[RMDB]
RNA sequence: GGGAACGACUCGAGUAGAGUCGAAAAUAGCAAUACAACACACUCCUUUAUUAAUAACGCAAAACGAUAGAACUAUACCAAUUAAUGUAGGAGAGUUAGCUAAAGGAUAUGUUGAGAUGCCUAUAGAGCCCAACUGACUAUUCGUAGUCAGUUGGGCAAAAGAAACAACAACAACAAC
Reactivity to 2A3 in 0.01 (KOAc 150mM, MgCl2 10mM, bicine 150mM(pH8.5), 24C), signal-to-noise 1, nucleotides 027 to 126: u030a000g000c000a000a070u060a170c010a030a030c040a010c000a040c000u030c000c000u040u000u000a040u140u010a160a120u080a070a000c060g000c090a030a220a100a000c090g030a110u080a250g100a040a030c040u030a010u010a180c070c050a040a010u040u050a190a080u270g010u040a010g000g140a060g020a030g040u000u030a010g050c030u010a020a010a010g000g000a010u030a000u210g000u000u000g070a110g000a070u060g010c020c020u100a110u080a140g120a000